[RMDB]
RNA sequence: GGGAACGACUCGAGUAGAGUCGAAAACUGACGCCAUAUCACAAAGAUCGCAUCGGUUCAGCGAUAACCAUAGAUUCGUCUCAGGGGGCCACCUUUGACAUUGUGACUUUGCAUUUACCAUCGCCAAGUGGAGAUCAGGAUUCGUCCUGAUCUCCACAAAAGAAACAACAACAACAAC
Reactivity to 2A3 in 0.01 (KOAc 150mM, MgCl2 10mM, bicine 150mM(pH8.5), 24C), signal-to-noise 2, nucleotides 027 to 126: c020u030g050a030c010g000c030c000a090u030a050u130c070a030c070a130a220a050g010a090u060c060g070c130a040u050c100g040g000u110u030c090a040g060c000g060a050u060a050a020c000c040a040u020a120g130a090u080u080c070g060u000c080u020c050a030g000g010g000g080g110c060c000a030c000c000u030u050u080g050a030c040a080u020u140g010u030g060a000c010u030u060u050g030c010a030u070u050u110a060c000c010a030u070c040g060c000c050a100a030
Reactivity to DMS in 0.01 (KOAc 150mM, MgCl2 10mM, bicine 150mM(pH8.5), 24C), signal-to-noise 1, nucleotides 027 to 126: c080u000g000a040c050g010c040c030a030u000a110u000c010a050c190a020a060a180g000a100u000c130g010c120a050u010c030g030g010u020u000c080a090g020c080g000a050u010a040a070c080c070a010u000a090g000a020u000u000c040g020u050c020u020c060a110g000g020g000g020g020c130c080a010c100c040u020u000u010g010a080c110a090u010u000g030u000g010a040c100u000u000u000g000c060a120u000u030u000a090c110c040a120u000c020g010c030c110a090a120

Structure probing data (2A3 and DMS) for a 177-nucleotide construct. The reactions ran in a buffer of 150 mM KOAc, 10 mM MgCl2 and 150 mM bicine (pH 8.5), at 24 C. Source: RMDB library OK2TRN, as collected in RNAgym. The 2A3 profile rests on 1,127 reads.